Chemical mapping of a 177-nucleotide RNA with 2A3 and DMS. The 2A3 profile rests on 997 reads. The reactions ran in a buffer of 150 mM KOAc, 10 mM MgCl2 and 150 mM bicine (pH 8.5), at 24 C. DMS adducts were read by reverse transcription with MarathonRT. For 2A3 the reverse transcriptase was SuperScript II with manganese.
RNA sequence: GGGAACGACUCGAGUAGAGUCGAAAAGACGGAAAAGAUCGAACCUAAGAAGAUCAGGGAGUGUCAGCCGAAUCCUAGGGCUCCUAGGGACGCAUCGUCAGAUGCGAAAUAAACACUAACGUCGAAAGCCGAGUAAUACGUUCGCGUAUUACUCGGCAAAAGAAACAACAACAACAAC
Reactivity to 2A3 in 0.01 (KOAc 150mM, MgCl2 10mM, bicine 150mM(pH8.5), 24C), signal-to-noise 2, nucleotides 027 to 126: g010a010c000g020g020a100a010a010a190g030a030u130c080g010a100a120c000c050u100a130a000g120a150a020g000a000u030c010a060g200g000g000a020g030u000g070u110c110a110g050c000c050g050a040a000u020c000c000u030a040g030g050g130c020u000c000c040u080a040g000g000g000a000c000g010c000a000u000c000g160u300c190a100g000a020u000g010c030g010a000a000a000u060a000a010a000c090a000c140u090a100a040c020g000u000c020g010a000a050a000
Reactivity to DMS in 0.01 (KOAc 150mM, MgCl2 10mM, bicine 150mM(pH8.5), 24C), signal-to-noise 2, nucleotides 027 to 126: g010a130c020g070g000a070a020a180a100g000a040u000c050g000a070a240c060c120u080a270a280g040a080a080g010a000u060c050a050g000g040g020a010g000u000g080u000c070a040g030c080c080g000a040a120u000c000c000u010a000g000g000g000c170u040c000c000u000a040g020g000g000a130c010g010c040a000u000c040g000u000c300a050g030a020u000g030c000g040a000a030a130u000a060a070a050c120a020c110u000a000a140c000g060u000c000g000a050a040a080